[RMDB]
RNA sequence: GGGAACGACUCGAGUAGAGUCGAAAAGCUCGGAGACGAGCAAGGCUGACAAAACCCUGUCCCAACCUCCACGUGGUGUCGGCUGGAUAAUGCUGCAUUAUGUUGCAUUUAUCAACUGGGAAGCAAAAUACCGAGUAGCGUUCGCGCUACUCGGUAUAAAAGAAACAACAACAACAAC
Reactivity to 2A3 in 0.01 (KOAc 150mM, MgCl2 10mM, bicine 150mM(pH8.5), 24C), signal-to-noise 2, nucleotides 027 to 126: g000c000u000c000g010g090a130g000a020c010g000a000g000c000a000a050g030g000c010u010g000a030c020a020a140a060a110c000c000c000u030g030u040c010c020c030a030a050c020c050u080c050c060a100c140g140u200g000g000u070g000u020c000g010g000c010u050g000g000a010u010a020a000u000g000c000u050g020c010a040u160u110a190u300g000u000u000g000c000a000u040u010u090a020u050c030a010a040c020u050g030g010g000a060a000g070c040a000a030a130
Reactivity to DMS in 0.01 (KOAc 150mM, MgCl2 10mM, bicine 150mM(pH8.5), 24C), signal-to-noise 1, nucleotides 027 to 126: g060c000u000c000g000g000a300g000a300c010g000a030g000c000a060a000g010g060c010u000g000a070c080a190a140a020a090c080c010c020u010g000u000c030c000c020a010a150c040c030u000c030c170a040c080g000u030g000g020u000g000u020c000g000g010c020u000g000g000a080u000a060a020u000g000c000u030g000c000a060u040u050a140u000g000u000u010g000c000a000u050u030u050a000u000c050a100a110c060u000g010g000g000a210a030g000c140a070a100a070

This 177-nucleotide RNA was probed chemically with 2A3 and DMS. The data come from the RNA Mapping Database (RMDB), library OK1LIB. The RNA was probed in 150 mM KOAc, 10 mM MgCl2 and 150 mM bicine (pH 8.5) at 24 C. The 2A3 profile rests on 1,551 reads. For DMS the reverse transcriptase was MarathonRT.